[RMDB]
RNA sequence: GGGAACGACUCGAGUAGAGUCGAAAACGCAGAGGGUUCUGAUAACAAAGAACCUAGAUAGCCGCAUCGGUAUUAUAGGAUGUAGUCGGUGAGCCGGAAUGCCUGCAUCGUAAGCCUUUAAGUAAAUUUAAGUGUAAUCACUUCGGUGAUUACACAAUCACCGUGUACACUUCGGUGUACACGGUGAAAAAGAAACAACAACAACAAC
Reactivity to 2A3 in 0.01 (KOAc 150mM, MgCl2 10mM, bicine 150mM(pH8.5), 24C), signal-to-noise 1, nucleotides 027 to 156: c080g040c080a000g010a080g050g000g010u020u000c030u070g050a090u120a260a090c070a050a100a000g000a010a000c000c000u030a050g050a070u090a050g060c010c020g090c080a090u110c040g070g000u180a060u230u080a070u200a090g090g000a050u040g070u010a040g060u050c030g030g030u040g020a010g050c030c020g000g070a040a100u090g030c000c000u000g030c000a010u000c000g030u000a000a070g000c000c000u030u030u060a120a090g020u150a040a080a150u110u280u080a240a060g000u000g000u000a000a000u020c000a000c020u020u040c130g150g000u000g000a000u000u000a000c010a000c000a000a000